[RMDB]
RNA sequence: GGGAACGACUCGAGUAGAGUCGAAAAGCAACUUCAAGGACAGAGGUCAUUCCUUUUGCUAUGAAUGCAUCCAAUGGAGUGAUGGAGGUUUUCCUAUAGGAGAUAAGCUCUGAAAACUUGGUUGGAACGUACCGCCCGUAUUCGUACGGGCGGUACGAAAAGAAACAACAACAACAAC
Reactivity to 2A3 in 0.01 (KOAc 150mM, MgCl2 10mM, bicine 150mM(pH8.5), 24C), signal-to-noise 2, nucleotides 027 to 126: g000c000a020a020c000u210u150c000a010a000g000g070a090c000a000g020a020g000g060u040c000a020u050u100c020c000u000u160u030u030g000c010u080a140u250g270a210a170u230g120c050a000u030c010c090a000a080u100g010g000a010g130u020g000a030u080g000g000a050g170g000u090u020u000u300c010c000u110a110u110a250g140g070a130g000a200u070a070a000g030c000u050c000u000g050a000a000a000a060c020u050u050g050g000u000u060g010g020a010a000

An RNA of 177 nucleotides, treated with 2A3 and read out base by base. The reactions ran in a buffer of 150 mM KOAc, 10 mM MgCl2 and 150 mM bicine (pH 8.5), at 24 C.